The record gives the reactivity of an RNA of 177 nucleotides to 2A3.
RNA sequence: GGGAACGACUCGAGUAGAGUCGAAAACGCCGUGGCCCGCGCUCGACGCGCUCAUGAACAUCUGGUGCGCGGUCGCCGACAGCGGCAGCGGGAAUUGGCUGCGGCGCGCGGUGUCGAGCACGAGGCACGGGAUCGUGCCGUUCGCGGCACGAUCCCGAAAAGAAACAACAACAACAAC
Reactivity to 2A3 in 0.01 (KOAc 150mM, MgCl2 10mM, bicine 150mM(pH8.5), 24C), signal-to-noise 1, nucleotides 027 to 126: c020g030c010c020g020u110g220g090c000c030c020g010c000g040c050u030c000g090a160c000g020c000g050c000u020c010a050u230g140a300a250c020a230u190c090u130g000g000u090g030c030g020c050g050g000u090c000g020c020c050g180a140c070a090g000c020g040g040c020a000g000c030g020g120g100a120a260u130u210g270g000c020u000g020c000g140g060c010g000c030g000c000g050g000u030g070u120c000g020a000g050c040a030c020g050a190g070g000c040a010
Record summary:
The reactions ran in a buffer of 150 mM KOAc, 10 mM MgCl2 and 150 mM bicine (pH 8.5), at 24 C. The 2A3 profile rests on 629 reads.